[RMDB]
RNA sequence: GGGAACGACUCGAGUAGAGUCGAAAAACUCGCCCUGGCCGAUGACGUGAAGCUGGUAGAGGUACUGCUCGCCGCCGACGUAAUCCUGGUAAGGCUCCGAGGCCAGAUCGGGAUAGAUCAGAUGGCGACAGGGGCGAAAAUUCGUUUUCGCCCCUGUAAAAGAAACAACAACAACAAC
Reactivity to 2A3 in 0.01 (KOAc 150mM, MgCl2 10mM, bicine 150mM(pH8.5), 24C), signal-to-noise 2, nucleotides 027 to 126: a000c040u040c060g060c000c000c000u000g050g020c010c000g040a040u050g110a080c040g060u040g050a070a000g050c010u000g040g000u090a100g000a030g070g080u170a100c040u100g030c000u000c000g000c000c000g000c000c050g010a020c030g000u020a010a010u010c000c000u040g010g010u050a060a030g060g020c050u080c060c190g160a140g150g000c020c010a020g000a090u050c000g010g000g000a020u040a020g030a000u130c000a050g130a180u240g080g010c000g000
Reactivity to DMS in 0.01 (KOAc 150mM, MgCl2 10mM, bicine 150mM(pH8.5), 24C), signal-to-noise 2, nucleotides 027 to 126: a200c100u000c010g000c030c030c040u020g000g010c050c010g010a100u000g010a010c070g020u000g020a250a130g000c060u020g030g010u000a080g030a140g000g040u010a100c140u000g040c020u000c010g010c020c000g000c030c020g000a060c070g050u020a140a080u000c000c030u000g010g000u000a000a000g000g000c000u000c150c210g000a170g000g000c000c000a040g000a010u000c000g030g000g000a020u000a070g000a100u010c000a020g000a120u030g000g000c000g000